[RMDB]
RNA sequence: GGGAACGACUCGAGUAGAGUCGAAAAAUAUGUUUGCAUCUAACAAACGUGUAUGGAUGAAAAAACAAGGUACUAAUGAAGUUAAGUCUGACAUGAGUAUUUUCAAUAUUCCAAGUGAUGAUUUAAACACAGUUAUUGGACGUACUAAAGAUAAAAAGAGGUACUCAUUAUUCGUAAUGAGUACCUCAAAAGAAACAACAACAACAAC
Reactivity to DMS in 0.01 (KOAc 150mM, MgCl2 10mM, bicine 150mM(pH8.5), 24C), signal-to-noise 2, nucleotides 027 to 156: a130u000a000u020g020u000u000u040g050c040a160u000c100u040a140a110c010a040a060a050c070g050u010g040u000a110u000g000g020a080u000g010a000a070a070a040a090a090c040a050a080g010g030u010a040c020u000a070a090u000g000a110a080g040u000u000a050a140g000u000c030u020g000a170c090a020u000g000a040g010u000a030u000u000u000u000c080a060a080u020a120u000u000c030c070a110a190g010u000g000a100u000g010a130u010u010u010a060a060a130c040a060c030a080g020u000u000a030u000u000g020g000a040c080g030u000a120c070u000a040a120a020g010a160u020a060a040a110a130a200
Reactivity to 2A3 in 0.01 (KOAc 150mM, MgCl2 10mM, bicine 150mM(pH8.5), 24C), signal-to-noise 3, nucleotides 027 to 156: a000u150a080u100g040u000u020u040g020c000a020u010c050u080a080a030c020a070a100a090c130g080u070g020u080a140u110g000g030a060u070g010a190a000a000a000a020a030c080a040a020g050g000u080a080c040u140a030a090u170g050a050a060g020u050u050a060a030g020u040c050u050g020a020c060a130u080g040a010g010u020a030u020u060u000u020c010a040a000u000a030u120u000c060c050a130a010g020u030g050a120u010g000a010u060u200u300a030a040a000c010a000c000a010g000u050u020a000u020u020g010g000a010c010g000u000a000c000u050a100a090a010g080a040u140a050a180a010a010a020

Chemical mapping of a 207-nucleotide RNA with DMS and 2A3. For DMS, 3,495 sequencing reads were counted. Source: RMDB library OK3TST, as collected in RNAgym.